Structure probing data (2A3 and DMS) for a 177-nucleotide construct. The DMS profile rests on 3,428 reads. The reactions ran in a buffer of 150 mM KOAc, 10 mM MgCl2 and 150 mM bicine (pH 8.5), at 24 C. DMS adducts were read by reverse transcription with MarathonRT.
[RMDB]
RNA sequence: GGGAACGACUCGAGUAGAGUCGAAAAGAUAUGGAAUAGGAAAAAAAGUUCAACAGCGUACGGCCUCGGAAACGAGGUUACGACAUGAACCCUAUUCCUAAGUCAAAGUGUGUCUUCGGACACACAACACAUGGAAGUACUUCGGUACUUCCAUGUGAAAAGAAACAACAACAACAAC
Reactivity to 2A3 in 0.01 (KOAc 150mM, MgCl2 10mM, bicine 150mM(pH8.5), 24C), signal-to-noise 4, nucleotides 027 to 126: g020a010u010a010u060g000g000a000a010u000a040g010g250a090a150a040a040a050a090a130g030u040u000c090a300a220c080a300g050c010g020u030a030c130g170g030c000c010u000c000g030g000a010a010a020c010g000a000g000g000u010u010a000c000g050a050c090a170u290g020a000a000c010c000c000u000a000u000u000c000c010u010a030a010g010u020c050a070a140a160g000u020g000u000g010u010c000u030u130c300g140g010a000c000a000c000a000c000a000a050
Reactivity to DMS in 0.01 (KOAc 150mM, MgCl2 10mM, bicine 150mM(pH8.5), 24C), signal-to-noise 4, nucleotides 027 to 126: g010a020u000a210u030g000g010a030a010u010a000g020g040a000a000a130a100a100a100a230g000u000u000c020a120a170c260a180g000c010g010u010a030c300g040g000c010c000u000c010g030g010a060a040a110c010g010a030g000g000u000u000a000c000g010a060c120a130u010g010a000a000c070c000c000u010a030u000u000c000c000u010a020a100g000u000c010a100a040a100g010u000g000u000g030u000c000u000u010c180g050g000a010c000a000c010a000c000a130a150